[RMDB]
RNA sequence: GGGAACGACUCGAGUAGAGUCGAAAAGCGCAAAUCCACAAACGCCAACGAUGAGCGUUUCGCUGUAGCCACUUAAGGCAACAGCCGGGGCCGCCUGAGCCCUGUUACCAAAGACGGCUGGCGGGGGUAAUUACUUAUUGCUUCGGCAAUAAGUAAAUAGAGUAGUAGUAUUCGUACUACUACUCUAAAAAGAAACAACAACAACAAC
Reactivity to DMS in 0.01 (KOAc 150mM, MgCl2 10mM, bicine 150mM(pH8.5), 24C), signal-to-noise 3, nucleotides 027 to 156: g000c010g020c030a030a090a070u000c030c000a120c050a040a190a030c020g040c020c010a060a140c190g000a080u000g010a220g030c030g010u000u000u000c030g000c020u000g020u000a090g020c000c000a110c170u000u000a140a170g020g010c000a080a060c010a030g020c030c040g000g010g020g030c000c040g010c070c030u000g010a130g010c010c000c010u000g010u010u000a130c080c040a060a090a140g000a180c260g010g020c040u000g030g020c010g010g000g000g040g010u000a060a140u000u000a010c000u000u010a000u000u000g010c000u010u000c300g080g040c000a020a010u000a010a010g010u000a000a020a210
Reactivity to 2A3 in 0.01 (KOAc 150mM, MgCl2 10mM, bicine 150mM(pH8.5), 24C), signal-to-noise 4, nucleotides 027 to 156: g040c020g010c050a040a020a050u040c050c010a070c070a100a130a040c060g000c020c030a090a050c120g100a120u120g010a020g030c010g000u020u080u100c050g000c000u000g000u020a040g000c010c010a070c120u200u180a180a100g000g000c010a040a010c000a010g000c000c000g000g000g000g000c010c110g000c000c020u010g010a010g010c010c000c010u010g050u050u060a030c000c010a020a000a020g010a000c020g020g000c040u080g040g010c010g000g000g000g000g000u040a070a090u070u010a020c000u000u000a000u010u000g000c020u020u040c190g070g000c000a000a000u000a000a000g000u000a000a000a000